RNA sequence: GGGAACGACUCGAGUAGAGUCGAAAAAUAGAAUAAAUACAUUUAAGAUGAUACACUUCAGACCUGAAAGACGGUUGACAAAAGUAUCCGCACCCUGCUAACGGGUUACUCAAGCAGGAGGGCGAAAAAAUAUAGUUGUUUUCGAACAACUAUAUUUAAAAGAAACAACAACAACAAC
Reactivity to 2A3 in 0.01 (KOAc 150mM, MgCl2 10mM, bicine 150mM(pH8.5), 24C), signal-to-noise 5, nucleotides 027 to 126: a000u120a030g090a050a040u150a150a090a030u240a080c050a100u110u190u220a040a030g020a020u060g000a000u010a000c020a010c040u070u060c050a030g020a050c000c000u020g010a020a020a010g130a030c200g020g000u020u030g030a010c040a010a080a010a000g010u010a010u000c010c000g000c000a020c000c000c000u000g000c000u010a120a040c080g030g000g040u030u080a050c060u050c050a010a000g000c000a000g000g020a070g020g010g000c010g070a100a010a000
Reactivity to DMS in 0.01 (KOAc 150mM, MgCl2 10mM, bicine 150mM(pH8.5), 24C), signal-to-noise 7, nucleotides 027 to 126: a110u050a100g010a180a100u030a060a060a090u050a180c050a070u040u020u030a030a020g000a070u010g000a020u010a010c060a090c060u000u000c250a180g000a020c000c000u000g000a110a120a100g010a090c230g000g000u000u010g000a110c260a020a040a220a170g010u000a000u000c000c010g000c010a030c010c000c000u000g010c010u010a100a110c300g000g000g020u030u050a040c060u000c080a130a050g000c000a010g010g000a050g010g010g020c010g000a000a030a060